[RMDB]
RNA sequence: GGGAACGACUCGAGUAGAGUCGAAAACCAGUUAUCUGACCAAUAACAGAAUGCACCACAGCGUAAAAUCAUCUGAUUGGGUGAGUUGGUCGCACCGCCAUUUGACGAACGAACGCCAAGCCUAAGCACUACGAGUAUGUGUUCGCACAUACUCGAACGAUCUAAUAAAGUUCGCUUUAUUAGAUCGAAAAGAAACAACAACAACAAC
Reactivity to DMS in 0.01 (KOAc 150mM, MgCl2 10mM, bicine 150mM(pH8.5), 24C), signal-to-noise 5, nucleotides 027 to 156: c020c020a200g000u000u000a030u000c020u000g010a090c060c050a230a040u000a050a090c030a100g010a090a100u000g010c030a060c040c040a050c060a080g000c030g020u000a050a090a110a120u000c040a040u000c050u010g010a130u000u000g010g030g020u000g010a180g010u010u000g010g010u000c040g010c030a060c050c010g030c030c020a160u000u010u000g020a040c020g010a080a090c110g020a080a080c040g010c020c020a030a160g020c020c020u010a070a080g010c060a120c040u000a160c000g000a030g010u000a000u000g010u000g010u000u000c300g000c020a040c000a020u000a000c000u000c000g010a030a080
Reactivity to 2A3 in 0.01 (KOAc 150mM, MgCl2 10mM, bicine 150mM(pH8.5), 24C), signal-to-noise 9, nucleotides 027 to 156: c010c000a000g000u020u020a010u020c020u010g020a020c000c010a030a030u020a030a000c020a040g140a170a100u140g030c030a040c040c030a040c050a050g030c020g040u090a020a080a060a090u060c030a020u010c040u080g090a190u100u160g070g000g000u020g010a030g020u020u060g020g010u010c020g010c030a010c000c010g040c030c010a070u070u070u110g050a040c040g020a130a010c030g020a050a020c020g030c020c020a050a030g010c010c030u120a100a030g040c050a050c120u160a050c070g000a000g000u000a000u000g020u000g020u020u060c110g040c060a000c000a000u000a000c000u000c000g000a010a000